[RMDB]
RNA sequence: GGGAACGACUCGAGUAGAGUCGAAAACGAUGAGGGGAGAAGAGAAGUGGUCAGGUGGGUCGAAGACGCCCGCCCCAAGGCGGACGCCCGUCGCUUGUUUGCAUGCGGGGGUCAGACCCCCUUACCGAUUAUGCUGCUAGUUCGCUAGCAGCAUAAUAAAAGAAACAACAACAACAAC
Reactivity to DMS in 0.01 (KOAc 150mM, MgCl2 10mM, bicine 150mM(pH8.5), 24C), signal-to-noise 2, nucleotides 027 to 126: c100g010a080u000g000a110g030g000g020g010a130g020a070a060g000a080g010a100a060g020u020g000g000u000c080a040g000g010u020g030g000g000u000c030g000a130a120g000a100c060g000c000c010c000g020c000c190c190c080a050a070g010g010c010g000g000a060c170g020c130c120c140g010u000c060g020c040u010u000g000u010u010u010g000c110a080u010g000c000g010g000g010g000g010u000c040a150g000a120c000c000c000c000c000u000u000a010c020c020g020
Reactivity to 2A3 in 0.01 (KOAc 150mM, MgCl2 10mM, bicine 150mM(pH8.5), 24C), signal-to-noise 1, nucleotides 027 to 126: c070g070a120u120g020a080g000g020g010g010a070g000a110a000g090a020g020a120a050g080u070g070g000u000c020a020g000g020u190g080g080g000u000c000g060a120a060g000a030c040g260c050c000c000g020c020c010c000c020a060a010g170g180c000g000g050a060c070g140c130c130c000g090u040c020g000c120u040u180g040u270u250u160g080c020a020u140g010c060g040g010g000g030g000u010c000a040g000a000c010c000c000c000c030u000u000a020c020c000g000